Overview:
Structure probing data (2A3 and DMS) for a 177-nucleotide construct. The DMS profile rests on 1,887 reads. DMS (dimethyl sulfate) methylates the pairing face of unpaired adenines and cytosines. For DMS the reverse transcriptase was MarathonRT. Reactivities are given for positions 27 through 126.
RNA sequence: GGGAACGACUCGAGUAGAGUCGAAAAGAAUUGGUAUGUAAGCUACAUCUUCCGGUAGCUGCGUCACACUUUAAGAGUGUGCAUACUGAGCCGAAGCUCAGCUUCGGUCCCCCAAGGGAAGGGCAAAAGUGCCCUGACCAUUCGUGGUCAGGGCACUAAAAGAAACAACAACAACAAC
Reactivity to 2A3 in 0.01 (KOAc 150mM, MgCl2 10mM, bicine 150mM(pH8.5), 24C), signal-to-noise 2, nucleotides 027 to 126: g100a030a100u010u050g010g000u030a000u000g000u000a050a000g000c000u000a000c010a070u030c020u010u000c000c000g000g000u000a000g010c000u000g000c010g010u010c000a000c000a000c010u080u120u260a210a050g170a010g300u030g000u000g020c000a000u000a000c010u010g010a000g000c020c000g000a000a000g040c050u060c300a030g010c010u040u000c000g020g000u000c000c000c000c020c000a020a050g120g000g000a010a000g010g010g000c070a080a070a000
Reactivity to DMS in 0.01 (KOAc 150mM, MgCl2 10mM, bicine 150mM(pH8.5), 24C), signal-to-noise 1, nucleotides 027 to 126: g000a110a020u040u000g000g000u010a010u000g000u000a300a070g000c000u000a010c000a010u000c040u010u000c000c010g010g020u000a000g000c000u000g000c040g000u000c000a000c010a000c000u000u070u070a180a100g010a010g000u000g060u010g000c070a000u000a000c020u000g010a020g000c000c000g000a000a020g000c030u050c160a230g000c000u000u000c000g000g000u020c080c060c010c160c010a140a090g000g000g050a010a140g000g040g000c260a090a070a110